[RMDB]
RNA sequence: GGGAACGACUCGAGUAGAGUCGAAAACUCAAUGUAGGGAAUAACAUUGAAUUGAUACAUAUACCUUUUUCGGUGUAGGGAAAAACACCGAAUUGAUACAAAUACCUUUCUCAAUGUAGGGAAUAACAAAACAGGCAUCGCUUCGGCGAUGCCUGAACUUAUCUUCACGGUUCGCCGUGAAGAUAAGAAAAGAAACAACAACAACAAC
Reactivity to DMS in 0.01 (KOAc 150mM, MgCl2 10mM, bicine 150mM(pH8.5), 24C), signal-to-noise 1, nucleotides 027 to 156: c020u000c020a100a070u010g040u000a040g000g000g010a070a180u020a100a130c010a040u000u000g030a050a030u000u000g010a050u000a090c080a180u000a190u010a020c000c000u010u000u000u000u000c000g010g040u000g040u000a050g000g050g010a110a110a060a090a020c000a020c000c010g000a000a000u000u000g000a060u010a010c040a060a100a070u010a030c020c010u000u010u000c090u000c020a040a030u000g040u010a060g010g000g010a120a040u000a040a080c070a040a050a050a150c020a020g000g020c000a030u000c010g020c000u000u000c260g080g030c030g010a010u000g000c010c000u010g020a010a020
Reactivity to 2A3 in 0.01 (KOAc 150mM, MgCl2 10mM, bicine 150mM(pH8.5), 24C), signal-to-noise 4, nucleotides 027 to 156: c020u040c030a000a010u040g020u050a090g010g120g100a080a130u090a100a030c010a010u020u040g030a080a060u080u100g060a060u140a190c080a050u280a020u130a170c020c010u040u020u000u010u000c000g010g010u010g000u010a020g010g030g070a060a160a070a020a010c000a010c010c010g000a000a000u010u030g010a010u010a040c040a020a100a000u090a070c010c020u020u070u070c040u050c070a060a120u160g030u070a060g000g010g030a050a060u080a160a010c070a030a060a010a050c000a010g000g010c000a000u000c000g010c030u060u090c230g050g000c000g000a000u000g010c000c000u000g000a000a000

An RNA of 207 nucleotides, treated with DMS and 2A3 and read out base by base.
Conditions: 150 mM KOAc, 10 mM MgCl2 and 150 mM bicine (pH 8.5), 24 C.
The 2A3 profile rests on 2,835 reads.
For 2A3 the reverse transcriptase was SuperScript II with manganese.